[RMDB]
RNA sequence: GGGAACGACUCGAGUAGAGUCGAAAAUCGGAAAGUGAAAGAAAAAGGAAUCGAAACAUGAUCAGGCGAUUAUUGGCAAAUGGAUUUGAACUUCCUGGCGAUGAUUAUGUACUGCCUCCUUUGCCAAGCUGCUCGUAUUAUUCGUAAUACGAGCAGCAAAAGAAACAACAACAACAAC
Reactivity to 2A3 in 0.01 (KOAc 150mM, MgCl2 10mM, bicine 150mM(pH8.5), 24C), signal-to-noise 2, nucleotides 027 to 126: u090c010g050g110a110a060a000g130u150g040a130a110a070g100a050a190a020a010a040g000g010a020a060u110c040g000a120a060a070c040a020u030g010a040u050c020a010g040g050c010g070a080u110u000a090u220u070g060g030c020a010a050a050u170g030g010a080u040u000u260g040a080a050c060u050u030c020c010u000g000g000c020g010a030u010g020a010u040u070a050u140g050u050a070c030u040g020c000c010u030c000c020u010u000u000g000c030c000a010a000
Reactivity to DMS in 0.01 (KOAc 150mM, MgCl2 10mM, bicine 150mM(pH8.5), 24C), signal-to-noise 2, nucleotides 027 to 126: u000c040g000g000a080a030a150g000u010g000a090a090a140g000a010a050a020a030a050g000g020a040a070u000c070g000a070a070a040c080a000u000g000a050u000c040a040g000g010c060g000a020u010u010a150u000u000g010g000c020a030a010a010u020g010g030a040u000u020u030g020a060a140c180u000u010c030c010u000g030g000c000g000a090u010g000a040u010u000a070u000g010u010a090c300u010g020c030c060u000c010c010u000u000u000g000c030c040a090a110
The data come from the RNA Mapping Database (RMDB), library OK2TST. An RNA of 177 nucleotides, treated with 2A3 and DMS and read out base by base. 2A3 adducts were read by reverse transcription with SuperScript II with manganese. The DMS profile rests on 1,443 reads. DMS adducts were read by reverse transcription with MarathonRT.